[RMDB]
RNA sequence: GGGAACGACUCGAGUAGAGUCGAAAAGGCAAUGAUAGAUAUGGAGGGAGCUCGAACAGCGUUUGACGCAGCUCGGAAACGAGCUGCCGAGCUGGGAGAGCAUCGAUCUCCUAAGUCGAAGAGAAAACAGAAUUCGUUAGUUCGCUAACGAAUUCUGAAAAGAAACAACAACAACAAC
Reactivity to 2A3 in 0.01 (KOAc 150mM, MgCl2 10mM, bicine 150mM(pH8.5), 24C), signal-to-noise 1, nucleotides 027 to 126: g130g040c050a070a130u160g090a070u200a210g040a050u040a100u220g030g010a000g010g050g000a040g050c000u020c020g020a040a020c010a000g030c030g030u110u300u300g010a010c050g030c000a000g000c030u010c030g000g000a080a110a000c060g000a010g000c000u010g000c010c000g000a000g000c000u010g000g010g000a060g010a000g000c000a000u020c020g000a020u020c000u000c010c000u020a110a040g030u040c020g060a170a010g040a000g000a070a060a010a010
Reactivity to DMS in 0.01 (KOAc 150mM, MgCl2 10mM, bicine 150mM(pH8.5), 24C), signal-to-noise 3, nucleotides 027 to 126: g020g010c070a110a050u010g020a120u010a170g020a040u020a300u020g010g000a040g040g000g000a040g030c000u000c020g010a300a250c020a010g000c000g020u000u000u000g040a180c300g000c000a000g000c010u000c020g000g000a080a060a100c000g010a030g020c000u000g000c000c000g000a020g010c000u000g000g000g000a300g000a010g020c020a120u000c180g000a070u020c000u000c000c000u010a030a120g010u000c000g000a170a080g010a130g010a100a030a080a100